[RMDB]
RNA sequence: GGGAACGACUCGAGUAGAGUCGAAAACGGAAGCAUCGAUGUCUCCUCUUCCGGCCCGGGUCGUCAGUGACGCAUGCGCACUGGCGUACAGGACUCAGCCGCCGCCUGUACGGCGAUCGUGGCUUCGGGAGGAUGUUACGUUCGCGUAACAUCCUCCAAAAGAAACAACAACAACAAC
Reactivity to 2A3 in 0.01 (KOAc 150mM, MgCl2 10mM, bicine 150mM(pH8.5), 24C), signal-to-noise 2, nucleotides 027 to 126: c040g010g030a000a000g000c000a090u230c110g140a130u110g190u160c090u000c050c000u020c000u040u000c000c000g010g000c000c030c000g070g070g010u030c000g010u020c020a000g000u000g030a140c000g030c190a140u220g020c050g020c160a000c010u000g050g020c010g000u000a020c000a000g110g040a040c010u040c160a010g010c010c020g000c000c010g000c010c010u090g140u270a120c080g020g040c010g000a030u020c090g010u030g060g000c000u070u070c110g050
Reactivity to DMS in 0.01 (KOAc 150mM, MgCl2 10mM, bicine 150mM(pH8.5), 24C), signal-to-noise 1, nucleotides 027 to 126: c020g000g000a070a040g010c200a090u000c040g040a150u010g000u000c040u000c020c030u010c000u000u000c020c010g010g030c040c000c000g010g000g010u000c000g020u000c000a010g020u010g010a030c060g060c160a080u010g020c100g020c000a010c000u000g000g000c000g010u020a000c070a170g000g000a050c030u010c050a140g000c070c010g000c040c060g010c000c020u000g030u000a050c160g010g000c000g010a020u020c120g060u000g010g010c000u000u010c230g070